[RMDB]
RNA sequence: GGGAACGACUCGAGUAGAGUCGAAAAUGGUCUGGUGAUGUUGCUGCCGCACGGUUACGAAGGGCAGGGGCCGGAGCACUCCUCCGCGCGUCUGGAACGUUAUCUGCAACUUUGUGCUGAGCAAAACCGAUGAGACUUUUUUCGAAAAGUCUCAUCGAAAAGAAACAACAACAACAAC
Reactivity to 2A3 in 0.01 (KOAc 150mM, MgCl2 10mM, bicine 150mM(pH8.5), 24C), signal-to-noise 2, nucleotides 027 to 126: u130g030g040u040c040u020g020g050u060g050a120u100g020u140u070g040c030u020g060c030c010g010c000a010c030g020g010u050u100a010c040g030a090a050g030g040g000c010a010g020g000g030g000c000c000g000g000a000g040c030a000c110u070c000c010u000c000c020g040c010g020c020g300u000c020u050g040g000a040a030c040g000u070u070a100u090c040u030g000c010a020a120c000u070u100u070g020u020g010c050u040g010a020g010c040a010a050a050a070c090
Reactivity to DMS in 0.01 (KOAc 150mM, MgCl2 10mM, bicine 150mM(pH8.5), 24C), signal-to-noise 3, nucleotides 027 to 126: u000g020g000u010c030u000g000g010u020g030a110u010g000u000u010g020c020u000g020c070c060g000c050a070c020g010g020u000u010a060c080g020a090a100g000g000g040c030a030g020g010g000g010c020c030g000g010a040g020c170a240c230u010c080c010u000c010c040g020c140g030c020g020u000c020u010g010g000a060a060c080g030u010u000a070u000c050u000g020c060a070a070c100u000u000u000g000u000g000c060u000g000a100g010c050a080a020a100a140c180
An RNA of 177 nucleotides, treated with 2A3 and DMS and read out base by base. Values cover nucleotides 27 to 126. For 2A3, 2,145 sequencing reads were counted. DMS adducts were read by reverse transcription with MarathonRT. The DMS profile rests on 2,717 reads.